[RMDB]
Structure probing data (2A3 and DMS) for a 177-nucleotide construct. Source: RMDB library OK1LIB, as collected in RNAgym. DMS (dimethyl sulfate) methylates the pairing face of unpaired adenines and cytosines. The reactions ran in a buffer of 150 mM KOAc, 10 mM MgCl2 and 150 mM bicine (pH 8.5), at 24 C.
RNA sequence: GGGAACGACUCGAGUAGAGUCGAAAAGACGGGGACCGUCAUCACGCUCCUGGGCCUGACUCCGGAAGGCCACCGGGUGGCCGUUCACGUUUACGGCACGCGGCAGUACUUUUACAUGAACAAGGAGUACUCGAUCCCGGUUCGCCGGGAUCGAGUAAAAAGAAACAACAACAACAAC
Reactivity to 2A3 in 0.01 (KOAc 150mM, MgCl2 10mM, bicine 150mM(pH8.5), 24C), signal-to-noise 1, nucleotides 027 to 126: g090a000c000g010g000g090g100a000c050c000g000u000c000a110u180c050a000c060g090c000u020c030c000u000g000g000g130c000c000u090g000a130c020u040c050c000g000g100a040a040g060g000c000c000a000c000c000g000g010g040u050g130g040c000c000g040u110u090c240a210c170g010u300u300u190a000c000g000g000c000a000c080g100c120g000g050c000a000g020u040a100c000u000u160u100u070a210c220a100u070g000a120a040c000a000a100g030g000a000g000
Reactivity to DMS in 0.01 (KOAc 150mM, MgCl2 10mM, bicine 150mM(pH8.5), 24C), signal-to-noise 1, nucleotides 027 to 126: g000a180c120g000g000g000g000a240c000c040g120u000c030a090u000c160a000c000g000c000u000c000c000u000g210g000g030c000c090u000g000a300c150u150c090c020g000g000a070a000g010g000c000c000a240c000c000g000g000g100u000g000g000c100c150g060u010u000c190a190c240g000u000u000u000a280c000g000g000c000a000c000g000c070g000g000c140a010g000u000a000c090u020u000u000u060a300c060a190u040g090a000a300c180a220a210g070g000a010g000